[RMDB]
RNA sequence: GGGAACGACUCGAGUAGAGUCGAAAACGGAGUCUACCUCCAUCUGGUCUGUUCGGGCCCUCUUCGCCGGGGGGGCUCCUUCCCCAUCCUUAUCCUUCUUUCCAAGAAUUCCUUUGAUGUUUCCCAGUCCCUGUGCGGUUCGCCGCACAGAAAAGAAACAACAACAACAAC
Reactivity to 2A3 in 0.01 (KOAc 150mM, MgCl2 10mM, bicine 150mM(pH8.5), 24C), signal-to-noise 3, nucleotides 027 to 129: c010g000g010a020g030u070c010u050a240c010c010u050c000c000a020u060c050u070g010g020u010c020u030g210u070u110c100g030g000g020c000c020c000u060c050u110u090c020g100c060c100g000g000g000g000g000g000g000c000u000c000c000u020u020c000c010c000c010a010u020c000c000u080u060a040u060c000c000u000u000c000u060u040u000c010c010a010a010g050a050a110u030u080c020c000u040u030u020g050a050u100g040u000u050u000c010c010c000a010g040u030c000c000
Reactivity to DMS in 0.01 (KOAc 150mM, MgCl2 10mM, bicine 150mM(pH8.5), 24C), signal-to-noise 2, nucleotides 027 to 129: c150g020g030a030g020u000c060u030a230c000c040u000c000c000a030u000c080u060g000g000u000c040u030g020u030u060c020g010g000g070c020c000c030u010c040u010u030c160g060c190c040g030g020g010g000g070g040g000c060u010c020c030u010u000c040c000c010c090a120u010c030c020u030u010a130u050c030c020u030u000c000u000u000u000c000c000a130a110g020a130a080u010u030c000c000u000u000u000g040a110u010g020u010u020u010c020c000c040a170g020u040c030c030